Notes: The data come from the RNA Mapping Database (RMDB), library M2RFPK. The record gives the reactivity of an RNA of 207 nucleotides to 2A3.
RNA sequence: GGGAACGACUCGAGUAGAGUCGAAAAAGAGGCGAUACGUCGCCUCAAGCUUGGUGCUUAGCUUCUUUCACCAAGCAUAUUACACGCCGAUAACCGCCAAAGGAGAAACACUGACUACGGUCAGUGAGGAAGUUGGUUCGGUUCGCCGAACCAACAACCAGCUUCUUAUGUUCGCAUAAGAAGCUGGAAAAGAAACAACAACAACAAC
Reactivity to 2A3 in 0.01 (KOAc 150mM, MgCl2 10mM, bicine 150mM(pH8.5), 24C), signal-to-noise 2, nucleotides 027 to 156: a000g000a000g020g000c010g010a000u040a050c190g090u000c010g010c000c000u000c000a000a000g010c000u000u000g000g000u000g000c010u040u050a070g020c000u040u030c020u000u060u000c000a000c000c000a000a000g000c010a000u000a000u000u130a030c090a010c100g140c060c010g080a110u110a160a120c020c040g100c110c090a040a000a010g010g000a020g000a030a080a000c000a000c000u010g000a000c010u010a040c190g100g010u000c000a020g030u020g000a000g040g040a050a200g000u000u000g000g000u000u000c000g000g000u000u050c210g020c050c000g020a010a000c000c000a000a000c000a010a000
The reactions ran in a buffer of 150 mM KOAc, 10 mM MgCl2 and 150 mM bicine (pH 8.5), at 24 C.
2A3 adducts were read by reverse transcription with SuperScript II with manganese.